[RMDB]
RNA sequence: GGGAACGACUCGAGUAGAGUCGAAAAUUCCCUCCCGCCGUCAGCUGCUUCUUCUUGUUCUCGAGGGCCUUCCUUCGUCGGUGAUCCUGCCUCUCCUUGUCGGAGAACCCUCCUCUGAGAGGCCUCUUCCUAGGUCCGGAGUCUACCUCCAUCUGGUAUCAGCAUAAGAGUUCGCUCUUAUGCUGAUAAAAGAAACAACAACAACAAC
Reactivity to 2A3 in 0.01 (KOAc 150mM, MgCl2 10mM, bicine 150mM(pH8.5), 24C), signal-to-noise 1, nucleotides 027 to 156: u010u030c000c000c000u040c020c000c010g040c000c000g040u020c020a050g030c030u000g050c040u000u000c000u070u000c010u070u100g040u240u190c080u040c070g020a060g010g010g030c000c030u080u040c030c020u000u110c050g050u010c030g010g040u060g040a060u080c010c030u080g080c040c000u010c000u040c030c040u100u130g120u200c100g000g000a000g050a080a060c010c030c000u010c010c010u030c050u070g090a060g000a070g090g080c030c000u010c030u060u120c050c000u010a030g010g020u050c040c030g020g000a010g020u040c050u070a030c000c000u000c020c000a080u000c040u020g050g000u040

The data come from the RNA Mapping Database (RMDB), library VIROID. The record gives the reactivity of an RNA of 207 nucleotides to 2A3. Conditions: 150 mM KOAc, 10 mM MgCl2 and 150 mM bicine (pH 8.5), 24 C. For 2A3, 704 sequencing reads were counted.